An RNA of 177 nucleotides, treated with DMS and 2A3 and read out base by base.
The data come from the RNA Mapping Database (RMDB), library OK1LIB.
For 2A3, 3,983 sequencing reads were counted.
The reactions ran in a buffer of 150 mM KOAc, 10 mM MgCl2 and 150 mM bicine (pH 8.5), at 24 C.
RNA sequence: GGGAACGACUCGAGUAGAGUCGAAAAGACGGAAAAGAUCGAACCUAAGAAGAUUAGGAAGUGCGAGCCGAAUCCUAGGGCUCCUAGGGACGCAUCGUCCGAUGCGAAAUAAACACGAACGUCGAAAACCGUACUAGGGAUUCGUCCCUAGUACGGUAAAAGAAACAACAACAACAAC
Reactivity to DMS in 0.01 (KOAc 150mM, MgCl2 10mM, bicine 150mM(pH8.5), 24C), signal-to-noise 3, nucleotides 027 to 126: g010a050c000g020g020a080a050a070a130g030a100u020c030g000a190a110c020c000u000a020a010g020a120a060g000a190u030u000a020g000g000a110a080g000u020g000c120g000a060g000c020c000g020a170a080u010c010c000u040a060g000g000g040c030u020c010c010u010a020g000g000g020a300c000g000c040a020u000c000g000u060c230c120g000a040u000g010c040g010a070a100a080u040a060a060a080c080a060c100g000a020a130c020g000u020c020g010a050a050a080
Reactivity to 2A3 in 0.01 (KOAc 150mM, MgCl2 10mM, bicine 150mM(pH8.5), 24C), signal-to-noise 5, nucleotides 027 to 126: g010a010c020g010g060a110a060a070a070g090a050u100c030g020a080a080c000c000u000a020a010g080a060a020g020a140u040u000a010g000g010a090a020g080u020g140c070g010a020g050c020c030g060a060a040u040c000c000u010a010g010g000g100c040u040c050c000u010a020g000g060g000a000c020g010c000a010u020c010g220u060c100c200g000a000u020g020c030g080a030a080a150u180a040a060a000c100a010c110g090a110a020c010g030u010c010g030a120a000a000